[RMDB]
RNA sequence: GGGAACGACUCGAGUAGAGUCGAAAAAGAUAACAUAACAGACUUGCUCACCGUGAUGGUUCAAAAUGCAACGGCAGAGGUCAUGUAUAAGCGAUUAGAUCCUAAGACCAUGAAGCACAUCCUGUUCAUAACUUGGGGAAUUCGUUCCCCAAGUUAUAAAAGAAACAACAACAACAAC
Reactivity to DMS in 0.01 (KOAc 150mM, MgCl2 10mM, bicine 150mM(pH8.5), 24C), signal-to-noise 4, nucleotides 027 to 126: a050g000a140u000a090a090c070a070u000a060a090c090a070g000a050c040u000u000g000c020u000c050a070c040c040g010u000g010a080u010g010g000u000u010c160a080a050a070a070u010g020c050a080a050c080g000g020c130a050g010a060g010g000u000c030a050u000g010u010a060u000a060a070g010c100g000a070u000u000a060g000a130u000c010c030u000a050a090g000a060c040c030a040u000g020a060a070g010c040a030c060a080u000c020c030u010g010u000u000c130
Reactivity to 2A3 in 0.01 (KOAc 150mM, MgCl2 10mM, bicine 150mM(pH8.5), 24C), signal-to-noise 2, nucleotides 027 to 126: a000g080a020u150a070a020c040a050u120a070a020c010a060g040a020c010u030u090g020c000u020c000a030c030c000g000u020g100a140u150g050g090u120u100c030a040a020a110a130u130g020c030a020a070c030g000g000c050a020g020a020g050g030u010c040a030u020g080u000a100u010a150a050g040c010g020a010u010u130a060g050a130u000c010c010u030a070a020g030a030c000c000a030u040g050a040a010g010c020a010c010a060u060c010c010u030g010u080u070c030

An RNA of 177 nucleotides, treated with DMS and 2A3 and read out base by base. DMS adducts were read by reverse transcription with MarathonRT. For DMS, 3,905 sequencing reads were counted. For 2A3, 2,173 sequencing reads were counted. It was measured as part of the RMDB library OK2TRN. 2A3 adducts were read by reverse transcription with SuperScript II with manganese.